[RMDB]
RNA sequence: GGGAACGACUCGAGUAGAGUCGAAAAGUACUAUCACCAUCGUACCUAAUUGCAGUGACAUUUAUCUGGUUAGGUACUAGGAUGGCUGUGUAAAUGUCGCUUAGUAUCUAUCCGAUGGUGAUAGUAGGCUUGACGUAGAUUUCGAUCUAUGUCGAGCAAAAGAAACAACAACAACAAC
Reactivity to 2A3 in 0.01 (KOAc 150mM, MgCl2 10mM, bicine 150mM(pH8.5), 24C), signal-to-noise 9, nucleotides 027 to 126: g030u000a000c000u000a000u000c000a000c000c000a000u000c010g020u040a050c000c030u060a050a050u090u010g040c010a010g100u010g110a110c030a060u070u090u070a110u060c030u040g020g000u010u010a010g000g000u010a010c000u000a000g010g030a100u020g010g000c000u000g030u010g080u090a020a060a070u110g000u000c000g000c000u000u010a000g000u010a010u010c020u010a020u000c030c010g000a000u000g000g000u000g000a000u000a000g000u000a000g010
Reactivity to DMS in 0.01 (KOAc 150mM, MgCl2 10mM, bicine 150mM(pH8.5), 24C), signal-to-noise 9, nucleotides 027 to 126: g010u010a010c000u000a000u000c000a000c000c000a010u000c010g020u030a110c120c080u010a040a060u020u000g020c050a110g030u020g010a120c130a060u020u010u010a040u030c110u020g010g010u000u000a010g000g010u000a010c010u010a010g000g000a040u010g020g000c020u000g000u030g020u040a060a110a090u020g000u000c010g010c010u000u000a020g010u000a020u010c020u000a030u020c070c010g000a020u000g000g000u000g000a000u000a010g000u000a010g000